[RMDB]
RNA sequence: GGGAACGACUCGAGUAGAGUCGAAAAUACGCUUUGGAGUAGGUUCUCUUUAAGAAGUCCAAGUCAGUUCUUGUAGCAUCUUCUGCUGAGAAUGCUACGAACAAUCCAUGGUCCUUAGCGUAAACAACAUGGGUGGUGCGUUCGCGCACCACCCAUGAAAAGAAACAACAACAACAAC
Reactivity to 2A3 in 0.01 (KOAc 150mM, MgCl2 10mM, bicine 150mM(pH8.5), 24C), signal-to-noise 1, nucleotides 027 to 126: u050a010c000g000c040u020u000u000g000g040a100g010u060a050g000g000u000u060c040u000c000u040u140u090a100a010g070a060a070g040u120c010c000a010a010g030u080c060a040g030u140u040c080u090u080g010u180a080g090c030a080u110c030u040u000c000u070g050c030u120g080a030g060a210a090u070g210c000u000a000c000g000a000a000c040a070a090u070c050c060a250u260g010g010u050c000c000u040u000a000g010c000g020u000a080a080a000c040a000a150
The record gives the reactivity of an RNA of 177 nucleotides to 2A3. Reactivities are given for positions 27 through 126. It was measured as part of the RMDB library OK1LIB. 2A3 adducts were read by reverse transcription with SuperScript II with manganese.